[RMDB]
RNA sequence: GGGAACGACUCGAGUAGAGUCGAAAAUGAAAGCGCGAACUCAGCCGAAUGGCACCGCGAAGAAAAACAGGAUGACGCGCAUCCCACAUCCAGCGGACUCACGCAGAGACGCGGAAGAGAAAAAAAAGAAUCUUAUGAUCUUCGGAUCAUAAGAUUCAAAAGAAACAACAACAACAAC
Reactivity to 2A3 in 0.01 (KOAc 150mM, MgCl2 10mM, bicine 150mM(pH8.5), 24C), signal-to-noise 2, nucleotides 027 to 126: u130g000a030a060a020g000c020g000c000g050a080a050c050u010c130a020g020c010c000g200a250a150u260g000g000c010a030c000c040g070c070g080a130a100g060a040a130a020a010a000c020a030g070g040a030u040g050a020c010g000c000g000c010a040u010c010c020c000a010c020a030u020c010c000a020g030c000g080g090a180c010u030c050a060c070g180c100a060g010a000g010a050c020g000c000g020g030a030a030g020a010g060a060a050a030a000a000a000a000a020
Reactivity to DMS in 0.01 (KOAc 150mM, MgCl2 10mM, bicine 150mM(pH8.5), 24C), signal-to-noise 2, nucleotides 027 to 126: u000g030a140a080a050g000c020g000c010g030a070a170c100u010c030a090g000c000c000g020a130a060u000g000g050c070a140c080c030g040c030g000a110a080g010a040a060a110a100a160c140a100g020g000a030u000g000a270c070g030c030g000c020a090u020c000c030c010a250c110a050u000c040c040a130g010c030g000g000a160c040u000c000a150c110g030c130a080g010a060g010a170c000g000c030g000g030a090a080g000a100g040a000a000a000a010a030a100a080a040